[RMDB]
RNA sequence: GGGAACGACUCGAGUAGAGUCGAAAACCAUCGACUGUCACCAGAUGCUGCAUCACCUGAUCACUGAUGGCUCAACGGUAUCCGGCGGUACAACUGAAUACUAGUAGCUGCCUUUUGAGCGGGUUGGAAAAUCGGAGGUUGUUCGCAACCUCCGAAAUCUCCAGAUGUACUUCGGUACAUCUGGAGAAAAAGAAACAACAACAACAAC
Reactivity to 2A3 in 0.01 (KOAc 150mM, MgCl2 10mM, bicine 150mM(pH8.5), 24C), signal-to-noise 1, nucleotides 027 to 156: c000c000a050u090c060g090a040c110u170g030u170c040a010c080c010a040g010a080u060g050c050u080g000c000a080u020c020a000c040c030u000g010a010u060c010a000c030u060g000a020u050g090g000c000u050c030a030a030c010g000g000u000a000u020c030c060g010g020c020g000g040u100a050c010a060a030c070u110g030a080a090u140a160c080u020a020g030u010a000g020c010u030g020c030c010u130u110u040u070g020a020g010c050g000g000g000u060u110g080g000a130a060a160a180u010c000g000g000a000g000g020u000u000g000u000u040c030g000c140a000a000c000c010u000c000c000g020a000a000a000